[RMDB]
RNA sequence: GGGAACGACUCGAGUAGAGUCGAAAAAACCAUAGUCUCGUGCUAGUUCGGUACUAUACAGGGAAGGGAAGUCACUCGCAUACGUGUGUGUGCAUUUCUUGCUAUUGCUGCUUAGCUUCUCUAAAACCCACAUUGUGUACUUCGGUACACAAUGUGGAAAAGAAACAACAACAACAAC
Reactivity to 2A3 in 0.01 (KOAc 150mM, MgCl2 10mM, bicine 150mM(pH8.5), 24C), signal-to-noise 2, nucleotides 027 to 126: a000a000c050c000a010u050a010g060u050c030u010c060g040u050g080c050u050a120g230u130u100c010g000g000u020a010c000u010a010u060a150c200a070g010g000g050a050a010g000g050g000a010a000g020u020c010a010c030u010c020g000c030a000u030a120c240g080u030g010u020g000u020g050u020g070c030a020u000u000u000c030u010u000g030c000u050a060u140u300g070c040u010g000c010u060u000a000g030c000u000u000c020u000c000u000a060a040a070a080c010
Reactivity to DMS in 0.01 (KOAc 150mM, MgCl2 10mM, bicine 150mM(pH8.5), 24C), signal-to-noise 1, nucleotides 027 to 126: a050a060c030c020a160u000a030g010u000c010u000c060g010u000g030c110u000a000g000u010u000c080g000g010u000a010c060u000a050u000a090c150a020g000g000g080a080a040g010g000g000a020a010g010u000c000a000c040u010c090g000c000a030u010a040c300g020u010g040u010g000u000g020u000g000c060a070u000u000u000c010u000u000g020c050u000a080u000u010g020c230u000g010c010u000u020a060g000c090u000u000c000u000c020u000a040a040a080a120c170